[RMDB]
RNA sequence: GGGAACGACUCGAGUAGAGUCGAAAAGGGUGUCUAAAGGAUCGUGGAUCUGCUAUGACUCCACAACUCUAAGAAAAGAAGAUUCGGUACCACCAUCCUCAUUAUGGAAAUAACAAACGAAUGAAACAAAACCAUUUGUCACUUUCUACAAGAUUCAGUAAUUAAAUGGGUUCGCCCAUUUAAUUACAAAAGAAACAACAACAACAAC
Reactivity to 2A3 in 0.01 (KOAc 150mM, MgCl2 10mM, bicine 150mM(pH8.5), 24C), signal-to-noise 5, nucleotides 027 to 156: g040g010g000u040g010u030c040u110a090a070a070g020g010a030u090c070g030u030g030g010a010u010c010u060g090c080u200a080u300g020a070c050u020c000c010a030c020a050a110c020u080c040u100a120a070g070a070a150a020a020g090a050a020g030a060u070u050c020g010g050u040a040c010c010a010c010c000a030u020c000c010u060c040a040u050u220a040u150g040g050a020a020a110u190a080a030c050a070a060a010c060g040a010a010u080g040a110a070a040c050a030a140a010a020c040c000a030u010u020u030g040u020c020a020c110u020u090u080c020u110a080c040a090a030g040a110u160u230c020a020
Reactivity to DMS in 0.01 (KOAc 150mM, MgCl2 10mM, bicine 150mM(pH8.5), 24C), signal-to-noise 2, nucleotides 027 to 156: g000g000g020u000g020u000c050u010a050a110a200g000g010a020u000c020g000u020g000g000a080u000c000u070g020c100u000a200u000g010a060c040u010c000c030a020c020a050a010c040u010c040u020a110a120g010a040a070a140a190g000a100a170g000a160u000u000c040g010g040u010a130c030c000a110c010c000a130u010c030c010u000c100a150u050u010a110u000g070g000a040a030a050u000a050a010c010a020a040a010c050g010a120a070u010g000a140a100a220c040a140a080a160a150c130c020a050u000u000u000g000u010c010a040c050u000u000u000c050u010a080c050a040a050g000a230u010u000c060a160
This 207-nucleotide RNA was probed chemically with 2A3 and DMS. For DMS, 1,817 sequencing reads were counted. For DMS the reverse transcriptase was MarathonRT. Reactivities are given for positions 27 through 156.